[RMDB]
The record gives the reactivity of an RNA of 177 nucleotides to DMS and 2A3.

RNA sequence: GGGAACGACUCGAGUAGAGUCGAAAACUCUGGUGAGCCCCUAUCUAGUAUAGCAAUCCACCAAGCAGGUGAAUUCACACAAUUCAGGUUCUCAGAGAAAAUGCGCCCUGACUUGACAGGUAUGGUCAAUGAUGGCAGGAUUCGUCCUGCCAUCAUUAAAAGAAACAACAACAACAAC
Reactivity to DMS in 0.01 (KOAc 150mM, MgCl2 10mM, bicine 150mM(pH8.5), 24C), signal-to-noise 3, nucleotides 027 to 126: c020u010c000u000g030g040u050g000a010g000c010c050c150c300u010a080u030c060u030a210g000u020a030u020a070g010c150a030a050u010c020c000a000c000c020a180a120g050c160a110g010g020u000g020a050a000u010u000c070a190c120a070c120a180a030u010u010c220a230g020g000u000u000c020u000c000a060g000a020g000a100a060a030a030u010g020c150g000c090c020c000u000g000a140c070u000u000g000a070c060a060g000g000u000a060u020g020g000u000c060
Reactivity to 2A3 in 0.01 (KOAc 150mM, MgCl2 10mM, bicine 150mM(pH8.5), 24C), signal-to-noise 4, nucleotides 027 to 126: c000u020c000u000g040g060u140g030a020g010c000c000c050c000u010a080u060c060u040a040g110u100a100u080a030g060c050a020a010u010c020c000a010c020c000a070a070g170c090a070g060g010u010g010a010a010u070u020c040a080c000a000c000a160a120u120u130c040a050g000g000u000u000c050u000c010a000g000a000g040a150a100a030a010u120g050c050g050c000c000c000u020g070a070c030u050u060g020a020c000a050g000g100u090a090u200g090g010u040c050